An RNA of 207 nucleotides, treated with DMS and 2A3 and read out base by base. For 2A3 the reverse transcriptase was SuperScript II with manganese. It was measured as part of the RMDB library OK3TST. The RNA was probed in 150 mM KOAc, 10 mM MgCl2 and 150 mM bicine (pH 8.5) at 24 C. Values cover nucleotides 27 to 156.

[RMDB]
RNA sequence: GGGAACGACUCGAGUAGAGUCGAAAAUUAAAAAUGUGAUGUCACCUAUCCAAACUUAAAAGAUCCCCUUGUGCACAUCAAUGGCUGUGAUCGACUUCUAUAGUGGCCUAUCACCGCAGUUAAGGCAACAGGUCCACAUUGCACUAUGAGAGCAGGCACGUGAUAAUGCAUUCGUGCAUUAUCACGUAAAAGAAACAACAACAACAAC
Reactivity to DMS in 0.01 (KOAc 150mM, MgCl2 10mM, bicine 150mM(pH8.5), 24C), signal-to-noise 2, nucleotides 027 to 156: u030u010a050a110a000a120a070u000g040u000g020a120u010g030u000c020a100c030c030u000a120u000c030c030a040a040a090c070u010u000a090a060a100a150g020a130u000c040c010c010c050u000u000g020u010g000c030a040c050a100u020c020a040a060u010g010g030c050u010g010u000g000a080u000c000g000a070c030u000u000c050u000a100u000a110g020u010g040g030c040c000u030a080u000c040a040c000c030g030c060a240g000u020u010a070a090g000g070c060a040a040c040a010g000g000u020c000c060a060c090a070u000u000g000c020a040c040u000a050u020g000a140g000a140g010c040a090g000g100c090
Reactivity to 2A3 in 0.01 (KOAc 150mM, MgCl2 10mM, bicine 150mM(pH8.5), 24C), signal-to-noise 3, nucleotides 027 to 156: u160u080a030a060a020a020a020u100g060u050g060a040u060g050u110c040a070c050c010u020a090u030c060c020a040a170a110c090u130u200a100a060a030a040g130a130u030c000c000c000c000u020u070g010u030g040c080a020c010a120u060c020a000a120u040g040g000c050u020g020u010g000a050u030c040g040a050c010u040u060c060u110a100u050a180g070u040g050g000c000c030u040a040u040c030a010c040c030g000c010a030g010u060u070a180a030g080g000c000a030a040c020a080g070g020u030c000c010a040c020a050u030u080g020c020a000c030u060a020u140g070a040g020a030g040c030a060g060g000c040